[RMDB]
RNA sequence: GGGAACGACUCGAGUAGAGUCGAAAAAUAAAGAGCGUCGCACACACACAGACUAAGUCUGACACAGACAGACGCUAAACCGCUCUGUCAGUGUGCGAGAUAUCGGUAUUAAAUAGAGCGGAAAAAACAUAUAUGUAUUCUUCGGAAUACAUAUAUGAAAAGAAACAACAACAACAAC
Reactivity to 2A3 in 0.01 (KOAc 150mM, MgCl2 10mM, bicine 150mM(pH8.5), 24C), signal-to-noise 5, nucleotides 027 to 126: a000u140a010a090a020g100a010g050c060g060u010c000g000c010a010c000a000c000a000c000a000c010a020g020a040c060u160a230a010g010u000c000u010g070a070c040a010c010a190g080a030c010a010g000a010c030g000c000u020a110a040a030c010c010g000c020u000c000u000g020u020c010a050g000u010g000u010g030c010g010a000g020a000u070a030u020c020g030g040u060a100u090u220a110a100a080u100a030g020a000g020c020g000g000a090a050a000a000a020a000
Reactivity to DMS in 0.01 (KOAc 150mM, MgCl2 10mM, bicine 150mM(pH8.5), 24C), signal-to-noise 6, nucleotides 027 to 126: a070u000a040a070a090g000a090g020c120g010u000c010g010c030a040c020a030c040a180c170a140c100a030g000a020c040u000a100a140g010u000c000u010g000a130c220a080c210a080g010a050c020a020g000a030c080g000c080u000a020a080a100c110c040g000c050u000c000u000g000u000c060a100g010u000g010u000g000c000g010a030g010a100u010a050u000c050g000g010u010a050u010u000a040a090a070u000a050g000a040g010c020g010g010a000a040a050a060a050a080
Conditions: 150 mM KOAc, 10 mM MgCl2 and 150 mM bicine (pH 8.5), 24 C. An RNA of 177 nucleotides, treated with 2A3 and DMS and read out base by base. The data come from the RNA Mapping Database (RMDB), library M2PK90. 2A3 adducts were read by reverse transcription with SuperScript II with manganese. For DMS the reverse transcriptase was MarathonRT. For DMS, 7,932 sequencing reads were counted.